[RMDB]
RNA sequence: GGGAACGACUCGAGUAGAGUCGAAAACUAGUUGGAUGAUUGGCGCGGAAGCGACAUCAUCCUCGGGCGCGUUAAGCAUGUGAACGUGCACGUAGCCUGCCAUGUCUUUAGCGAUAGUUGCUAUCGGAAGAUCUUGCAGUAAAAGUGCGAUGGUAAGUAGAUUCUGUUUAUUCGUAAACAGAAUCUAAAAAGAAACAACAACAACAAC
Reactivity to DMS in 0.01 (KOAc 150mM, MgCl2 10mM, bicine 150mM(pH8.5), 24C), signal-to-noise 3, nucleotides 027 to 156: c040u000a070g020u000u000g030g010a040u010g000a050u010u010g020g000c000g010c010g040g050a230a240g040c000g000a010c000a000u000c000a030u000c000c010u000c030g000g010g030c040g000c020g030u000u010a070a110g010c050a090u000g020u000g010a060a100c030g000u000g000c010a050c010g000u010a180g020c200c010u000g010c000c050a070u000g010u000c010u000u000u000a040g020c030g010a060u000a040g010u010u000g030c030u010a040u010c020g000g010a050a030g000a030u010c120u000u000g010c030a060g020u000a070a090a080a140g030u000g010c020g010a130u010g030g000u000a050a150g010
Reactivity to 2A3 in 0.01 (KOAc 150mM, MgCl2 10mM, bicine 150mM(pH8.5), 24C), signal-to-noise 8, nucleotides 027 to 156: c040u050a050g110u120u110g030g010a010u010g010a050u070u260g050g000c030g000c030g060g130a180a080g010c010g010a030c070a050u010c000a000u000c000c010u000c000g000g000g010c020g010c010g020u040u140a110a040g040c030a050u070g080u080g210a150a040c040g000u010g010c010a000c020g020u030a050g040c000c010u020g020c020c020a040u050g010u000c010u020u060u030a130g070c000g030a030u010a030g150u230u210g180c030u010a020u010c010g010g000a000a000g000a010u000c030u060u060g000c010a030g020u150a030a070a110a040g090u070g020c060g060a080u060g020g060u110a090a060g050